[RMDB]
Structure probing data (DMS and 2A3) for a 177-nucleotide construct. DMS adducts were read by reverse transcription with MarathonRT. The 2A3 profile rests on 1,650 reads.
RNA sequence: GGGAACGACUCGAGUAGAGUCGAAAAGGUUUCACUGGGUUAGCCAGGAUGGUCUUGAUCUCCUGGCCUCGUGAUCCGCUAGCCUCGGCGUCCCAAAGUGCUGGGAUUACAGACGUGAGCCACCACGUACUAUUGCGGCAUUCGUGCCGCAAUAGUAAAAAGAAACAACAACAACAAC
Reactivity to DMS in 0.01 (KOAc 150mM, MgCl2 10mM, bicine 150mM(pH8.5), 24C), signal-to-noise 2, nucleotides 027 to 126: g020g030u000u000u000c020a060c030u030g030g000g010u010u010a150g020c000c000a020g010g010a050u010g040g000u010c060u010u000g000a040u000c020u010c000c010u000g000g000c000c010u000c030g030u000g000a020u000c010c000g040c100u000a140g010c010c010u000c100g000g000c080g000u010c010c010c010a070a120a050g010u010g010c070u000g020g020g000a080u000u000a060c100a070g000a060c050g010u000g010a070g010c050c030a080c080c010a040c120g020
Reactivity to 2A3 in 0.01 (KOAc 150mM, MgCl2 10mM, bicine 150mM(pH8.5), 24C), signal-to-noise 2, nucleotides 027 to 126: g000g000u090u120u050c010a020c130u250g070g050g000u210u300a030g000c000c010a000g010g040a090u210g010g050u080c060u220u280g100a060u050c020u030c000c000u020g040g000c020c000u020c010g000u000g010a000u010c000c040g090c110u060a030g000c000c000u070c060g000g010c040g080u020c000c010c000a020a000a000g220u170g020c010u040g000g050g000a070u070u120a090c060a050g070a020c000g040u040g050a020g020c040c030a040c020c010a020c030g050